Structure probing data (2A3) for a 207-nucleotide construct. The reactions ran in a buffer of 150 mM KOAc, 10 mM MgCl2 and 150 mM bicine (pH 8.5), at 24 C. For 2A3, 2,103 sequencing reads were counted.
RNA sequence: GGGAACGACUCGAGUAGAGUCGAAAAACGCUUCACAAUGUGCGGCAAAGAAACAUUGUUUAUGCAAAGGCACUUCGCAAUGUGUGCUCAAACAUUGCUUAUUUAAACACGCUUCACAAUGUGCGACAAAACUUCACGGUCUUCGGACCGUGAAGAACUCGUCUGCUAUGUUCGCAUAGCAGACGAGAAAAGAAACAACAACAACAAC
Reactivity to 2A3 in 0.01 (KOAc 150mM, MgCl2 10mM, bicine 150mM(pH8.5), 24C), signal-to-noise 4, nucleotides 027 to 156: a000c010g010c010u030u010c010a000c000a020a000u010g010u000g020c000g080g050c140a170a150a050g110a010a050a000c010a000u010u000g080u090u130u100a130u170g050c050a060a060a090g140g000c010a000c020u030u010c010g000c020a020a020u000g030u000g060u000g010c110u200c200a040a040a010c000a010u010u000g010c000u030u110a110u070u190u130a040a080a010c060a000c030g060c030u150u140c050a030c040a190a110u130g030u070g050c020g070a030c080a020a060a040a030c010u000u000c000a000c000g000g000u020c030u010u060c140g120g000a000c000c000g000u000g000a000a000g000a000a010